[RMDB]
RNA sequence: GGGAACGACUCGAGUAGAGUCGAAAAAGAGUACGGCCGCUAGGUUUCCGGUUGUGGAUGGCAGCGUGUGUGUCGCCCCGUCGUCUAGUGCUGGUUCUAGGGCUGGGGCGUCAGCAUCCAGGUAAAACCUAUAAAUGUCAUUCGUGACAUUUAUAGGAAAAGAAACAACAACAACAAC
Reactivity to DMS in 0.01 (KOAc 150mM, MgCl2 10mM, bicine 150mM(pH8.5), 24C), signal-to-noise 7, nucleotides 027 to 126: a070g000a110g010u000a080c080g010g010c020c030g020c060u000a050g010g000u000u000u000c030c030g010g000u000u010g020u000g010g000a060u000g010g020c090a050g010c080g020u000g020u010g020u000g010u000c000g000c010c010c000c010g010u000c030g010u010c010u000a020g010u000g010c080u000g000g000u010u000c010u000a020g000g000g010c020u010g020g000g000g010c010g010u000c020a070g010c020a050u000c040c030a070g010g010u010a060a060a110a150
Reactivity to 2A3 in 0.01 (KOAc 150mM, MgCl2 10mM, bicine 150mM(pH8.5), 24C), signal-to-noise 4, nucleotides 027 to 126: a000g070a010g030u060a040c030g020g010c020c020g020c100u070a060g020g080u030u070u060c040c010g020g040u080u090g060u100g070g020a070u050g060g030c050a030g010c060g030u080g000u030g030u010g010u060c000g000c000c000c000c000g010u020c000g040u010c020u010a010g020u020g130c110u120g140g060u140u030c010u010a010g030g010g000c060u130g010g000g000g000c010g010u000c000a000g000c000a020u000c020c020a010g040g010u060a040a070a030a070